[RMDB]
The record gives the reactivity of an RNA of 177 nucleotides to 2A3 and DMS. Reactivities are rounded to 0.1 and cut off at 0 and 3.
RNA sequence: GGGAACGACUCGAGUAGAGUCGAAAACACUUCUUGCCUUGCAUCUCCUUUUAAGUUUACUUAAGACUGAGAAGCUGAGAUCUGACAGCACCAACACAAGGUAUAAAAGAGAUUUCAUGAAAGACCACUAUGAAUCAAUGUUCGCAUUGAUUCAUAGAAAAGAAACAACAACAACAAC
Reactivity to 2A3 in 0.01 (KOAc 150mM, MgCl2 10mM, bicine 150mM(pH8.5), 24C), signal-to-noise 6, nucleotides 027 to 126: c040a000c010u050u040c010u010u060g010c010c000u020u030g000c020a050u020c010u010c010c000u010u040u000u070a040a030g010u060u080u110a160c050u100u080a090a020g010a030c020u020g020a030g010a110a020g010c080u070g020a030g010a120u030c050u090g040a030c010a030g030c030a040c040c040a090a020c040a010c010a090a040g030g020u050a080u140a120a120a020a000g060a010g020a040u050u090u110c050a060u140g110a100a040a060g070a040c000c070a030
Reactivity to DMS in 0.01 (KOAc 150mM, MgCl2 10mM, bicine 150mM(pH8.5), 24C), signal-to-noise 7, nucleotides 027 to 126: c100a200c070u000u000c020u000u010g020c030c020u000u010g000c070a130u000c020u010c010c170u030u000u010u000a040a030g000u000u000u010a100c110u000u000a050a050g010a040c100u010g010a090g010a040a090g020c080u010g010a080g010a050u000c130u000g010a110c050a040g020c030a100c090c080a040a110c160a110c060a020a030g010g010u000a070u010a040a060a060a040g000a100g000a100u000u000u000c060a080u000g010a070a070a100g010a090c060c060a190
For 2A3 the reverse transcriptase was SuperScript II with manganese. For DMS the reverse transcriptase was MarathonRT.